About this RNA:
This 177-nucleotide RNA was probed chemically with 2A3 and DMS. The DMS profile rests on 2,952 reads. 2A3 adducts were read by reverse transcription with SuperScript II with manganese. The data come from the RNA Mapping Database (RMDB), library OK2TST.
RNA sequence: GGGAACGACUCGAGUAGAGUCGAAAAAAUGAAAAUCGCCAGCGGCUAGGGUGUCGCAAGGUAGACAUUAUUGCCGGAGUCGCUCCUUUACCUUUAUCCGAUAAAGCCGAUGCCAUUUUUAUUGGUGCUAGGAUAUAGGGUUCGCCCUAUAUCCUAGAAAAGAAACAACAACAACAAC
Reactivity to 2A3 in 0.01 (KOAc 150mM, MgCl2 10mM, bicine 150mM(pH8.5), 24C), signal-to-noise 3, nucleotides 027 to 126: a010a010u080g020a040a030a010a060u070c040g010c030c030a000g030c000g030g030c040u100a110g150g150g120u120g020u050c010g010c030a040a020g000g000u030a010g040a060c010a030u040u140a060u120u270g100c060c050g050g010a010g030u000c000g000c000u000c000c000u020u110u060a090c010c010u080u090u130a080u060c020c030g030a060u070a060a090a000g000c040c040g050a020u080g000c020c030a050u080u050u020u110u120a100u050u080g070g000u080g040
Reactivity to DMS in 0.01 (KOAc 150mM, MgCl2 10mM, bicine 150mM(pH8.5), 24C), signal-to-noise 3, nucleotides 027 to 126: a040a030u010g000a050a030a070a090u000c050g020c040c050a110g010c020g030g010c010u000a110g020g010g050u000g020u010c060g010c110a040a050g020g030u000a040g000a070c090a040u010u000a070u000u010g010c070c040g010g000a020g010u000c020g020c010u000c010c000u000u010u000a050c080c030u000u010u000a100u020c050c020g010a080u000a040a050a060g010c070c070g010a080u010g010c090c030a050u000u010u010u010u000a050u030u000g010g000u000g010